[RMDB]
RNA sequence: GGGAACGACUCGAGUAGAGUCGAAAAAGCCUGAGGGUGGGCUGAGGUCUCGCCUCUGUCGUCGCAGUGAGACUGCGGUUUCAGGUCACAGCAGCAGCAGGGGCCUCCCCUUUUGUCGCCUACCGGAUGAAAGACCUGUGUCCCUGCAGAGGUGGCAAUACUAAUAGUACUUCGGUACUAUUAGUAUAAAAGAAACAACAACAACAAC
Reactivity to 2A3 in 0.01 (KOAc 150mM, MgCl2 10mM, bicine 150mM(pH8.5), 24C), signal-to-noise 1, nucleotides 027 to 156: a000g070c010c000u030g050a050g040g070g040u080g000g010g000c040u040g020a050g030g060u010c040u010c080g040c010c000u040c030u070g050u080c080g040u040c000g000c010a050g000u070g120a100g110a140c010u020g010c000g020g010u000u040u030c020a010g000g060u030c020a020c000a030g170c020a010g010c010a000g000c010a020g060g000g000g000c000c010u050c010c000c000c010u040u060u010u000g030u020c030g090c090c000u090a170c100c060g040g010a020u050g060a050a030a020g030a040c010c060u040g060u090g010u080c000c000c000u020g000c020a040g010a040g060g020u020g010g010c000a020
Reactivity to DMS in 0.01 (KOAc 150mM, MgCl2 10mM, bicine 150mM(pH8.5), 24C), signal-to-noise 1, nucleotides 027 to 156: a110g000c050c020u010g020a080g020g000g000u000g040g010g030c010u100g020a060g040g020u000c000u000c020g020c030c020u030c010u000g010u000c050g030u010c010g030c030a110g020u000g000a160g020a300c000u010g040c100g020g000u000u000u020c030a090g000g020u010c020a070c050a110g030c040a120g010c080a170g000c020a030g030g000g020g020c010c030u010c000c020c060c020u000u000u000u000g040u000c020g040c040c040u000a120c130c060g010g010a060u000g000a040a030a070g000a070c030c030u000g010u010g020u000c020c010c010u000g010c050a070g020a110g030g020u010g000g010c050a180